[RMDB]
RNA sequence: GGGAACGACUCGAGUAGAGUCGAAAAGAUAUGGAGGAAUUGUUCGCACUCUCCCCACCUCGGAAACGAGAGGAGUGAACUACGAACUGUUCCUCCUAAGUCAAAGUAGUUGCUUCGGCAACUACAACACCUUUUUUUGCUUCGGCAAAAAAAGGUGAAAAGAAACAACAACAACAAC
Reactivity to DMS in 0.01 (KOAc 150mM, MgCl2 10mM, bicine 150mM(pH8.5), 24C), signal-to-noise 1, nucleotides 027 to 126: g020a040u000a300u010g000g000a020g040g000a010a020u030u000g010u000u000c020g010c020a060c070u000c000u010c010c010c040c030a300c300c010u000c000g020g000a050a050a270c000g020a000g050a030g020g000a030g020u000g010a100a120c090u000a100c040g000a020a000c000u000g000u000u000c020c000u010c000c000u000a000a070g000u000c010a120a070a160g000u000a040g000u000u000g030c000u010u000c150g020g020c010a000a000c000u000a000c030a220a120